[RMDB]
RNA sequence: GGGAACGACUCGAGUAGAGUCGAAAAGAUAUGGAGUGUGACCUGGAGAAAUUACUCGGAAACGAGUACUUUCUAUGAAGGGUACACUCCUAAGUCAAAGUCGGGUAAACUUCGGUUUACCCGACAACCCAUAACCUAUCUUCGGAUAGGUUAUGGGAAAAGAAACAACAACAACAAC
Reactivity to DMS in 0.01 (KOAc 150mM, MgCl2 10mM, bicine 150mM(pH8.5), 24C), signal-to-noise 3, nucleotides 027 to 126: g000a030u000a180u020g000g000a010g040u000g000u000g000a030c000c010u000g000g010a140g030a000a000a010u000u000a010c000u010c000g030g010a030a060a100c000g000a010g010u000a010c220u000u000u010c000u000a190u040g000a250a250g000g010g020u000a010c000a010c010u010c000c000u000a000a060g000u000c030a110a190a170g020u000c010g000g000g020u000a000a010a000c010u000u020c290g020g010u000u010u000a000c000c010c000g010a000c010a030a050
Reactivity to 2A3 in 0.01 (KOAc 150mM, MgCl2 10mM, bicine 150mM(pH8.5), 24C), signal-to-noise 3, nucleotides 027 to 126: g010a010u030a030u090g000g000a010g000u030g000u090g250a230c000c010u070g080g080a290g000a120a010a000u010u000a010c000u000c000g000g000a020a020a010c010g000a010g000u010a000c020u050u040u040c030u060a300u300g160a050a020g000g000g000u010a000c000a000c000u000c000c000u000a000a000g000u000c050a160a150a000g000u000c010g000g000g010u010a020a000a010c020u090u130c300g040g000u060u000u010a010c010c000c000g010a000c010a000a000